Structure probing data (DMS and 2A3) for a 177-nucleotide construct. 2A3 adducts were read by reverse transcription with SuperScript II with manganese.

[RMDB]
RNA sequence: GGGAACGACUCGAGUAGAGUCGAAAAGGUAGGGCAUUCGUGCCCUACCACACCUCUAAGCAGAUUGGCGUGGACGACGUCGCGGCCCACGUUUACCAACAACUACUCUCUCCUUCGGGAGAGAGAAUCUUUAAGGAUAAUUCGUUAUCCUUAAAGAAAAAGAAACAACAACAACAAC
Reactivity to DMS in 0.01 (KOAc 150mM, MgCl2 10mM, bicine 150mM(pH8.5), 24C), signal-to-noise 9, nucleotides 027 to 126: g010g010u000a010g010g000g010c000a030u000u010c200g030u000g010c000c000c000u000a000c000c000a040c160a070c030c000u000c180u010a090a090g020c120a070g010a160u000u000g000g000c020g010u000g000g000a050c040g020a090c140g010u000c130g020c070g010g000c030c010c010a060c020g010u000u010u000a120c040c030a050a050c110a100a080c150u010a180c000u000c000u000c000u000c000c000u000u010c160g020g010g000a000g000a000g000a000g000a040a050
Reactivity to 2A3 in 0.01 (KOAc 150mM, MgCl2 10mM, bicine 150mM(pH8.5), 24C), signal-to-noise 9, nucleotides 027 to 126: g010g000u000a000g000g010g000c020a010u030u070c170g090u040g000c000c000c000u000a000c000c000a000c000a000c000c010u020c060u090a100a080g070c060a040g070a300u090u100g030g010c010g010u010g000g020a020c030g010a060c060g160u170c130g030c020g120g010c020c000c000a010c010g020u040u070u070a080c020c010a030a040c010a030a020c030u150a080c000u020c000u000c000u010c010c000u020u050c220g100g000g000a000g000a000g000a000g000a000a010
Source: RMDB library M2PK50, as collected in RNAgym. The 2A3 profile rests on 36,184 reads. As a SHAPE reagent, 2A3 marks flexible, mostly unpaired nucleotides at the ribose 2'-OH.